This 177-nucleotide RNA was probed chemically with 2A3 and DMS. It was measured as part of the RMDB library OK2TRN. For DMS the reverse transcriptase was MarathonRT. The RNA was probed in 150 mM KOAc, 10 mM MgCl2 and 150 mM bicine (pH 8.5) at 24 C.
RNA sequence: GGGAACGACUCGAGUAGAGUCGAAAAACAUGUGCAUGCCGCCAUGCCCAGCUAACUUUUUAAAUUUUUUGUAGAGAUGGGGUCUCACUGUGUUGUCCAGGCUGAUCUUGAACUUCUUGCCUCAAGCCACACAAUAGUGGUUCGCCACUAUUGUGUGAAAAGAAACAACAACAACAAC
Reactivity to 2A3 in 0.01 (KOAc 150mM, MgCl2 10mM, bicine 150mM(pH8.5), 24C), signal-to-noise 2, nucleotides 027 to 126: a000c020a050u050g050u070g050c040a010u170g160c100c050g000c020c000a010u050g080c020c000c000a020g030c040u090a030a150c050u100u120u030u180u300a120a200a240u180u140u160u040u050u060g070u030a050g000a030g010a100u070g020g000g000g000u010c020u060c030a050c030u020g000u030g060u150u070g010u000c040c030a040g020g000c030u010g000a050u010c000u000u070g040a040a010c000u060u060c030u020u080g010c030c000u020c040a050a050g010c010
Reactivity to DMS in 0.01 (KOAc 150mM, MgCl2 10mM, bicine 150mM(pH8.5), 24C), signal-to-noise 3, nucleotides 027 to 126: a170c040a030u010g020u000g030c030a090u010g000c150c070g020c020c010a040u000g010c010c000c010a140g020c060u000a050a070c060u000u000u010u020u020a030a110a050u000u000u000u000u000u010g010u010a090g010a080g000a060u000g000g000g000g010u000c030u000c060a040c060u010g020u000g000u000u010g000u010c020c040a040g010g010c030u000g010a070u000c020u000u000g000a060a060c060u000u010c040u010u000g010c060c030u000c080a070a090g010c160